[RMDB]
RNA sequence: GGGAACGACUCGAGUAGAGUCGAAAAGGACCCCACUCCUGCGAGACAGGAGUAAUCCUAAACAGGGUUUUCACCCUUCCUUUAGUUUCCUUCCUCUCCUGGAGAGGUCUUCUGCCCUAGCCCGGUCCUAUACAUAUGGCUUCGGCCAUAUGUAUAGAAAAGAAACAACAACAACAAC
Reactivity to 2A3 in 0.01 (KOAc 150mM, MgCl2 10mM, bicine 150mM(pH8.5), 24C), signal-to-noise 4, nucleotides 027 to 126: g000g000a010c020c010c040c000a060c010u000c000c000u040g020c140g050a060g030a080c170a120g030g000a000g000u000a000a040u000c010c000u060a060a030a030c300a160g020g020g020u070u050u240u300c130a050c000c000c000u000u020c010c000u030u020u010a010g010u010u050u040c020c000u040u050c000c000u030c000u010c020c010u030g010g020a010g010a000g010g000u030c000u030u000c020u050g020c010c000c020u040a050g030c010c020c040g070g060u040c000
Reactivity to DMS in 0.01 (KOAc 150mM, MgCl2 10mM, bicine 150mM(pH8.5), 24C), signal-to-noise 4, nucleotides 027 to 126: g010g000a030c010c010c050c220a080c010u000c010c000u000g000c150g010a080g000a090c140a010g000g000a020g010u000a010a030u000c150c020u000a010a020a020c220a010g000g010g010u000u010u000u020c210a090c010c000c010u000u000c030c020u000u000u000a060g000u000u010u000c020c000u000u010c040c030u000c010u000c010c040u000g000g010a030g000a090g010g000u000c010u000u000c040u010g000c030c010c010u010a090g000c010c030c020g010g010u000c110